[RMDB]
RNA sequence: GGGAACGACUCGAGUAGAGUCGAAAAUGCAUCUUCCGCCCGGCGAUCAGUAAGUGCACCAGAUUGGGAUUAACCUUCAAAAGCUGCAGCUUAACUAUUCCCAGUAAUGUCCACUUACAAGGAGCCCCAUUGAUCCUAUGUUCGCAUAGGAUCAAUGAAAAGAAACAACAACAACAAC
Reactivity to 2A3 in 0.01 (KOAc 150mM, MgCl2 10mM, bicine 150mM(pH8.5), 24C), signal-to-noise 3, nucleotides 027 to 126: u070g010c010a060u020c020u100u030c040c010g030c050c030c000g020g010c010g040a070u040c010a000g020u030a060a010g010u010g010c030a010c000c010a050g040a300u020u030g000g000g000a010u040u070a090a090c050c050u130u130c110a140a190a010a010g000c030u170g090c070a080g010c020u070u040a040a020c030u040a090u040u030c000c000c000a000g010u030a010a070u040g010u000c010c000a010c020u000u010a000c000a020a020g050g020a030g000c000c030c000
Reactivity to DMS in 0.01 (KOAc 150mM, MgCl2 10mM, bicine 150mM(pH8.5), 24C), signal-to-noise 4, nucleotides 027 to 126: u010g020c090a040u010c060u000u000c030c040g030c040c040c060g010g020c080g000a070u000c090a150g020u010a010a020g010u000g020c200a040c040c180a130g010a080u000u000g000g020g000a020u010u000a060a140c080c100u000u000c130a070a130a070a070g010c040u000g020c170a100g010c020u000u000a060a070c140u000a050u000u000c000c000c010a060g000u000a100a080u000g010u000c200c000a030c030u000u010a020c040a090a090g000g020a230g000c000c030c130
The record gives the reactivity of an RNA of 177 nucleotides to 2A3 and DMS. The reactions ran in a buffer of 150 mM KOAc, 10 mM MgCl2 and 150 mM bicine (pH 8.5), at 24 C. For DMS, 2,383 sequencing reads were counted. It was measured as part of the RMDB library RFMREP. 2A3 adducts were read by reverse transcription with SuperScript II with manganese.